[RMDB]
Structure probing data (DMS and 2A3) for a 177-nucleotide construct. The data come from the RNA Mapping Database (RMDB), library 15KREP. 2A3 is a SHAPE reagent: it acylates the 2'-hydroxyl of flexible nucleotides of all four kinds. Conditions: 150 mM KOAc, 10 mM MgCl2 and 150 mM bicine (pH 8.5), 24 C.
RNA sequence: GGGAACGACUCGAGUAGAGUCGAAAAUGUAGACAGCAAUGAAAAUUUAACAUGGCCACUUGUUUUAGAAUGCACUAGGGCAUCCACUUCUGCCGUUAAGUUGCAAAAUAAUGAGAUCAAACCUUCACACCUAACUUAUGUUCGCAUAAGUUAGGUGAAAAGAAACAACAACAACAAC
Reactivity to DMS in 0.01 (KOAc 150mM, MgCl2 10mM, bicine 150mM(pH8.5), 24C), signal-to-noise 4, nucleotides 027 to 126: u000g010u000a080g010a090c080a050g020c070a080a070u010g000a070a060a110a090u010u000u010a060a090c050a050u010g010g010c030c050a080c060u000u000g010u010u000u000u010a040g000a070a110u010g000c030a020c050u010a060g000g000g010c030a040u010c060c060a070c130u010u000c070u000g020c020c020g010u010u000a040a080g000u020u000g000c060a050a060a060a080u000a040a040u000g010a080g000a090u010c130a030a080a130c090c050u000u010c140a180
Reactivity to 2A3 in 0.01 (KOAc 150mM, MgCl2 10mM, bicine 150mM(pH8.5), 24C), signal-to-noise 3, nucleotides 027 to 126: u040g020u020a020g020a090c030a030g040c030a030a030u070g070a100a100a080a080u140u210u090a060a020c030a050u050g050g010c020c010a040c030u040u030g060u010u120u000u040a060g050a080a030u050g010c000a000c030u010a020g000g030g000c010a000u050c040c000a060c040u090u060c030u050g010c000c000g040u050u010a060a010g020u070u020g020c010a020a070a030a000u140a050a050u120g040a020g020a050u070c050a030a030a100c010c000u070u080c040a030